Notes
The record gives the reactivity of an RNA of 177 nucleotides to DMS and 2A3. Values cover nucleotides 27 to 126. It was measured as part of the RMDB library M2PK90.
[RMDB]
RNA sequence: GGGAACGACUCGAGUAGAGUCGAAAACAAUUUUCAACUUUUCACCUUCCCUUGAAACUUGAAUUUUCCUACAAUCAAACUACCUCCUAUAAAAUCCAAUCCUCUACUUUACCAAUGCGAAAAUAAACAAUGUUUAAGCAUUCGUGCUUAAACAUUGAAAAGAAACAACAACAACAAC
Reactivity to DMS in 0.01 (KOAc 150mM, MgCl2 10mM, bicine 150mM(pH8.5), 24C), signal-to-noise 3, nucleotides 027 to 126: c050a040a020u000u010u000u010c020a050a090c070u000u000u010u010c050a100c080c060u010u000c010c000c020u000u000g000a050a040a050c170u000u000g010a100a080u000u000u000u000c000c020u000a090c110a090a100u000c100a060a120a110c030u010a080c040c020u000c020c010u000a100u000a020a040a120a060u010c030c030a030a090u000c010c000u000c020u000a050c040u000u000u000a120c020c010a050a030u000g010c080g020a040a060a080a080u000a060a090a230
Reactivity to 2A3 in 0.01 (KOAc 150mM, MgCl2 10mM, bicine 150mM(pH8.5), 24C), signal-to-noise 2, nucleotides 027 to 126: c030a030a050u050u020u110u170c060a080a060c070u090u060u090u110c070a080c000c000u010u000c010c000c000u010u010g000a040a020a000c000u020u010g090a070a070u050u040u030u060c030c020u040a100c060a150a180u160c040a090a070a120c000u080a080c020c020u050c010c000u060a080u070a190a110a030a020u020c010c010a000a030u010c000c010u000c000u000a070c000u070u000u000a030c000c000a030a100u090g030c060g080a090a060a030a080u140a060a060a010